Source: RMDB library TTRDEL, as collected in RNAgym. The record gives the reactivity of an RNA of 177 nucleotides to 2A3 and DMS. DMS adducts were read by reverse transcription with MarathonRT. The RNA was probed in 150 mM KOAc, 10 mM MgCl2 and 150 mM bicine (pH 8.5) at 24 C. For 2A3, 20,839 sequencing reads were counted. Values cover nucleotides 27 to 126.
RNA sequence: GGGAACGACUCGAGUAGAGUCGAAAAGAUAUGGAAUUCGUUUGACGACCAGCACGUUGAAAUCGGAAACGAUGGAGUGCAUGGUCCGAGAAUUCCUAAGUCAAAGUGCUCAGUUCGCUGAGCACAACUCAAUACUUCAGUUCGCUGAAGUAUUGAGAAAAGAAACAACAACAACAAC
Reactivity to 2A3 in 0.01 (KOAc 150mM, MgCl2 10mM, bicine 150mM(pH8.5), 24C), signal-to-noise 7, nucleotides 027 to 126: g010a010u080a070u210g010g010a010a010u010u010c050g120u170u260u290g080a090c040g000a000c010c000a000g000c000a000c020g200u300u060g020a040a050a000u000c000g020g020a060a050a020c020g010a000u010g010g030a030g000u010g030c150a250u030g000g000u000c010c010g010a010g000a000a010u000u010c000c000u030a120a010g040u030c060a150a050a070g010u010g000c000u000c000a020g040u060u100c270g030c130u000g000a000g000c000a000c000a000a000
Reactivity to DMS in 0.01 (KOAc 150mM, MgCl2 10mM, bicine 150mM(pH8.5), 24C), signal-to-noise 8, nucleotides 027 to 126: g010a050u000a300u010g000g000a010a000u000u000c010g010u000u010u010g020a250c300g000a010c010c000a030g000c000a010c010g020u000u010g000a090a120a020u000c010g010g010a120a110a140c000g010a020u000g000g010a070g020u000g000c000a060u000g010g000u000c000c010g000a090g010a010a000u000u000c000c000u000a030a070g000u010c030a080a100a120g010u000g000c000u000c000a010g010u010u010c230g020c000u000g000a010g010c000a000c000a020a080